[RMDB]
Conditions: 150 mM KOAc, 10 mM MgCl2 and 150 mM bicine (pH 8.5), 24 C.
An RNA of 177 nucleotides, treated with 2A3 and DMS and read out base by base.
Source: RMDB library OK2TST, as collected in RNAgym.
For 2A3 the reverse transcriptase was SuperScript II with manganese.
RNA sequence: GGGAACGACUCGAGUAGAGUCGAAAACAGACGGGCCGAAGCCACCUAAAGGUAUCUCCGCUGUAACAGCGCGCAUCCGGGCCGGUAACAGGGUCUCUUUAGCGUCGAGCCGUCAUUACCGCUGAUGACCUACUGACUACUUCGGUAGUCAGUAGGUAAAAGAAACAACAACAACAAC
Reactivity to 2A3 in 0.01 (KOAc 150mM, MgCl2 10mM, bicine 150mM(pH8.5), 24C), signal-to-noise 2, nucleotides 027 to 126: c030a020g100a030c000g010g090g020c050c020g040a030a020g060c020c000a060c010c000u070a090a050a040g050g000u050a110u090c080u020c050c020g030c070u010g010u100a170a010c020a030g030c010g000c010g000c030a020u040c050c040g000g010g060c040c020g000g010u010a030a010c000a030g090g010g040u010c020u000c000u120u170u070a070g010c040g040u040c060g020a000g010c040c000g010u020c030a030u060u080a080c030c010g010c130u060g040a130u120g050
Reactivity to DMS in 0.01 (KOAc 150mM, MgCl2 10mM, bicine 150mM(pH8.5), 24C), signal-to-noise 2, nucleotides 027 to 126: c200a130g000a130c040g010g040g020c040c000g010a080a160g020c050c110a060c090c030u000a040a050a090g020g000u010a090u010c030u000c040c030g000c020u020g000u010a110a080c130a030g020c060g020c130g020c080a120u000c070c050g010g000g030c030c020g010g000u010a060a110c130a100g010g000g000u000c080u010c010u010u000u020a070g000c070g000u000c060g010a060g000c000c000g010u000c020a090u020u000a110c030c010g020c150u000g000a130u000g010